[RMDB]
Structure probing data (2A3 and DMS) for a 177-nucleotide construct. For 2A3 the reverse transcriptase was SuperScript II with manganese. For DMS the reverse transcriptase was MarathonRT.
RNA sequence: GGGAACGACUCGAGUAGAGUCGAAAAGAUAUGGAACUAUCACACCGCUCGACGAAGAGGUCUCGGAAACGAGACCUCAGAGAGCGUGUGAGUAGUUCCUAAGUCAAAAGUCGUCUUCGGACGACAAGUAGGGUAUUUUGUUCGCAAAAUACCCUACAAAAGAAACAACAACAACAAC
Reactivity to 2A3 in 0.01 (KOAc 150mM, MgCl2 10mM, bicine 150mM(pH8.5), 24C), signal-to-noise 3, nucleotides 027 to 126: g030a020u080a070u190g010g000a000a000c000u020a000u090c000a000c000a010c050c210g010c020u040c000g300a300c030g020a150a030g000a000g020g010u000c000u000c020g050g010a050a080a020c000g000a000g000a000c010c000u010c000a000g010a000g000a010g000c010g000u000g010u010g010a000g000u020a000g000u010u000c000c000u010a070a000g060u010c040a000a050a020a230g010u000c010g010u000c020u040u120c300g120g010a010c000g000a010c000a000a020
Reactivity to DMS in 0.01 (KOAc 150mM, MgCl2 10mM, bicine 150mM(pH8.5), 24C), signal-to-noise 3, nucleotides 027 to 126: g000a070u000a300u000g000g020a020a020c000u000a000u000c010a040c000a000c120c210g030c010u000c000g010a200c300g000a120a110g000a030g000g010u000c000u000c000g000g000a090a090a180c010g030a010g000a010c000c000u010c000a000g000a070g000a010g050c010g030u000g000u000g010a060g030u000a000g000u000u010c010c000u000a030a100g010u000c020a070a070a120a140g000u000c000g020u000c000u000u020c240g020g000a010c000g000a000c000a020a070